[RMDB]
Chemical mapping of a 177-nucleotide RNA with DMS and 2A3.
RNA sequence: GGGAACGACUCGAGUAGAGUCGAAAAGAAAGAAAGAUUAUUCAAAUGCUCGGAGACACAGAACAUUAGAGAAGACAGGAGUUCACUGUAGGUGAUGGUGAGAGUGGGCAUGGAGCAGGAGUGCCAACUUAGGAGUCUGAUUCGUCAGACUCCUAAGAAAAGAAACAACAACAACAAC
Reactivity to DMS in 0.01 (KOAc 150mM, MgCl2 10mM, bicine 150mM(pH8.5), 24C), signal-to-noise 7, nucleotides 027 to 126: g000a080a080a090g010a070a080a100g010a120u020u020a090u010u010c060a080a100a080u010g000c050u000c040g000g000a100g000a090c070a060c090a100g000a070a080c090a050u010u020a070g010a090g020a070a070g010a060c080a050g000g000a100g010u010u000c050a090c050u000g010u010a050g000g030u010g010a050u020g010g010u020g010a070g000a060g010u010g010g000g000c060a050u000g000g000a050g010c070a050g000g000a090g010u010g000c050c070a060a160
Reactivity to 2A3 in 0.01 (KOAc 150mM, MgCl2 10mM, bicine 150mM(pH8.5), 24C), signal-to-noise 6, nucleotides 027 to 126: g090a030a050a000g110a030a070a030g070a100u160u140a090u160u150c060a030a120a080u060g020c010u010c040g030g020a020g020a040c020a010c010a080g100a130a010c020a070u090u120a060g030a010g030a190a000g040a010c030a020g010g050a030g060u070u060c070a040c030u020g050u090a020g000g040u070g030a060u080g010g020u070g010a090g000a010g030u090g000g000g000c050a040u080g030g000a050g000c070a030g030g020a020g010u050g040c020c010a010a020
Source: RMDB libraries RFM100 and RFMREP, as collected in RNAgym. For DMS the reverse transcriptase was MarathonRT.